[RMDB]
RNA sequence: GGGAACGACUCGAGUAGAGUCGAAAAGUUAUGGAAAACGUCUUAGCUUCCACUACAACAACAAUGCUGGACGGUGAUGGUUCGACUUACUCGAAACCAUCACGUAGUGGUAGUCGUUCCCAUUCAAUAUACCAGCAACUUUCGAGUUGCUGGUAUAAAAAGAAACAACAACAACAAC
Reactivity to DMS in 0.01 (KOAc 150mM, MgCl2 10mM, bicine 150mM(pH8.5), 24C), signal-to-noise 2, nucleotides 027 to 126: g030u010u000a050u000g020g000a120a050a100a220c030g010u010c020u000u010a040g000c000u000u010c060c070a030c090u010a030c080a070a040c100a080a070c100a040a060u010g010c030u000g000g000a020c020g020g020u000g000a080u000g000g000u000u000c000g010a020c090u000u000a110c110u000c010g010a090a100a060c020c020a030u000c040a040c050g000u010a040g020u000g000g000u000a180g000u000c010g040u000u000c000c040c000a070u000u000c100a090a140
Reactivity to 2A3 in 0.01 (KOAc 150mM, MgCl2 10mM, bicine 150mM(pH8.5), 24C), signal-to-noise 3, nucleotides 027 to 126: g030u070u070a070u210g160g010a060a100a020a060c010g020u000c050u180u240a060g000c000u090u060c020c050a080c080u180a040c030a190a000c010a040a000c020a100a140u170g020c010u020g080g000a020c050g050g030u050g010a050u040g010g130u020u000c000g000a010c010u040u110a060c010u000c000g020a130a050a000c010c000a010u020c000a010c040g030u130a050g000u010g000g000u010a020g010u010c000g050u000u000c000c000c000a000u040u000c000a030a020
This 177-nucleotide RNA was probed chemically with DMS and 2A3. The reactions ran in a buffer of 150 mM KOAc, 10 mM MgCl2 and 150 mM bicine (pH 8.5), at 24 C. Source: RMDB library M2PK90, as collected in RNAgym. The DMS profile rests on 1,503 reads. Reactivities are given for positions 27 through 126. 2A3 adducts were read by reverse transcription with SuperScript II with manganese.